[RMDB]
Chemical mapping of a 177-nucleotide RNA with DMS and 2A3.
The reactions ran in a buffer of 150 mM KOAc, 10 mM MgCl2 and 150 mM bicine (pH 8.5), at 24 C.
For 2A3 the reverse transcriptase was SuperScript II with manganese.
Reactivities are given for positions 27 through 126.
RNA sequence: GGGAACGACUCGAGUAGAGUCGAAAAGAAAGAAUAUUUUGGGCAUUAUGGAAGACUAGUGAUUUUGUUGUUGUGACGUCAUCAGUACUGACAACAAGUCACAGUCUGCCUCAGUGACCAGAAUCAACAACCUGGUUAAUUUCGAUUAACCAGGUUGAAAAGAAACAACAACAACAAC
Reactivity to DMS in 0.01 (KOAc 150mM, MgCl2 10mM, bicine 150mM(pH8.5), 24C), signal-to-noise 5, nucleotides 027 to 126: g010a100a100a110g010a140a070u010a030u000u000u000u010g010g000g010c000a020u000u000a170u010g000g010a060a000g000a010c000u000a120g030u000g000a010u000u020u010u000g010u010u000g000u000u000g010u000g000a030c050g010u020c260a110u030c220a090g010u000a040c020u000g000a000c010a000a010c010a010a010g000u000c000a010c000a020g000u000c000u000g000c010c000u000c300a050g010u000g000a020c000c010a000g000a020a010u000c180a100a120
Reactivity to 2A3 in 0.01 (KOAc 150mM, MgCl2 10mM, bicine 150mM(pH8.5), 24C), signal-to-noise 9, nucleotides 027 to 126: g090a020a090a010g120a080a050u160a030u100u010u010u000g000g010g000c000a010u040u030a050u150g010g010a020a010g000a010c010u110a240g010u000g010a000u200u260u110u120g010u010u000g010u010u020g150u050g070a040c050g050u100c040a150u120c010a110g010u070a160c010u020g010a000c000a000a000c000a000a000g010u000c000a000c000a000g000u000c000u000g010c000c000u030c070a010g010u000g000a000c000c000a000g010a010a010u050c020a000a080